[RMDB]
RNA sequence: GGGAACGACUCGAGUAGAGUCGAAAAGAUAUGGAGUUGGCAUGCCGACGAAGCUAGUCGGAAACGACUAGCAGAGGAACUACAUGACCAACUCCUAAGUCAAAACGGUGUCCUUCGGGACACCGAACGAUUAAAAGGCGUUCGCGCCUUUUAAUCGAAAAGAAACAACAACAACAAC
Reactivity to 2A3 in 0.01 (KOAc 150mM, MgCl2 10mM, bicine 150mM(pH8.5), 24C), signal-to-noise 2, nucleotides 027 to 126: g040a000u000a030u110g010g000a010g010u010u030g000g030c020a010u020g050c070c100g170a300c040g000a070a000g000c000u000a000g010u010c000g000g000a040a010a000c000g000a000c000u010a000g030c000a000g000a010g010g000a090a100c130u230a000c230a020u060g300a300c000c000a010a000c000u010c010c000u000a010a000g020u020c020a010a010a110a060c030g010g010u010g000u030c000c000u020u170c300g130g000g000a010c010a010c010c000g000a010a010
Reactivity to DMS in 0.01 (KOAc 150mM, MgCl2 10mM, bicine 150mM(pH8.5), 24C), signal-to-noise 3, nucleotides 027 to 126: g010a060u000a300u010g010g010a020g010u010u000g000g000c000a020u000g020c040c070g040a210c080g020a300a150g000c000u000a000g000u000c000g020g000a050a050a140c020g010a000c020u000a010g010c000a000g000a300g030g000a080a080c090u020a100c010a010u010g000a210c000c000a030a000c000u000c000c000u000a010a020g000u000c020a070a060a120a190c010g000g010u000g000u000c000c000u000u010c150g020g000g000a020c010a010c000c000g000a010a050
An RNA of 177 nucleotides, treated with 2A3 and DMS and read out base by base.
Reactivities are given for positions 27 through 126.